[RMDB]
RNA sequence: GGGAACGACUCGAGUAGAGUCGAAAAUCAGUGGAAAGGAUGUGGGAUUACACAGACAGUGAGGAUGUUGGCUUAGAAGCAGCCACCAUUUAAAAAAUGCGUAAUAGCUUACUCAUCGAGUGAUCCUAAUAAGAAGCCAUUUCGAUGGCUUCUUAUUAAAAGAAACAACAACAACAAC
Reactivity to DMS in 0.01 (KOAc 150mM, MgCl2 10mM, bicine 150mM(pH8.5), 24C), signal-to-noise 8, nucleotides 027 to 126: u020c050a080g020u020g000g000a080a070a040g000g000a070u010g020u010g000g000g010a030u000u000a060c040a100c100a080g010a120c300a070g010u010g010a070g000g010a010u000g000u020u010g010g000c010u000u010a100g020a110a140g010c250a030g010c000c010a020c030c000a000u000u000u010a010a030a070a050a060a040u010g010c040g000u000a060a050u030a150g000c010u000u010a070c020u000c010a040u000c030g000a120g010u000g000a040u000c000c010u000
Reactivity to 2A3 in 0.01 (KOAc 150mM, MgCl2 10mM, bicine 150mM(pH8.5), 24C), signal-to-noise 7, nucleotides 027 to 126: u070c020a040g070u090g070g050a070a040a040g060g030a070u080g020u100g080g000g000a020u030u060a050c050a000c000a030g110a090c020a030g040u020g050a030g030g010a020u030g010u020u020g010g000c000u020u030a040g020a210a020g080c030a000g010c000c000a000c000c000a000u010u050u160a050a110a010a000a000a010u120g000c030g010u020a040a050u030a110g000c000u010u020a030c010u020c030a070u090c020g030a010g030u010g010a020u000c000c000u010
Chemical mapping of a 177-nucleotide RNA with DMS and 2A3. The reactions ran in a buffer of 150 mM KOAc, 10 mM MgCl2 and 150 mM bicine (pH 8.5), at 24 C. For DMS the reverse transcriptase was MarathonRT.